[RMDB]
RNA sequence: GGGAACGACUCGAGUAGAGUCGAAAAGAGACGAGACGCGCCCCGGCAUCGGCGAGCCGCAGGAGGAGGACGAUCCAGCAGAGGGCGAAGAGCACGUAGAAGGCAUAGCGGAGCACGGUGAGCACAGCGCCAUGGUUAGGUUCGCCUAACCAUGGCGAAAAGAAACAACAACAACAAC
Reactivity to DMS in 0.01 (KOAc 150mM, MgCl2 10mM, bicine 150mM(pH8.5), 24C), signal-to-noise 1, nucleotides 027 to 126: g020a060g010a210c060g060a040g000a110c100g010c120g000c100c010c050c060g020g000c050a050u000c090g030g030c100g030a100g000c020c010g000c020a050g020g000a160g000g120a090g020g090a120c110g000a090u000c040c000a230g010c060a060g000a170g020g010g000c080g000a070a080g010a130g040c050a050c060g060u000a010g000a100a050g020g000c200a020u010a150g000c060g000g000a060g020c130a130c120g000g010u000g000a090g000c070a040c160a030g000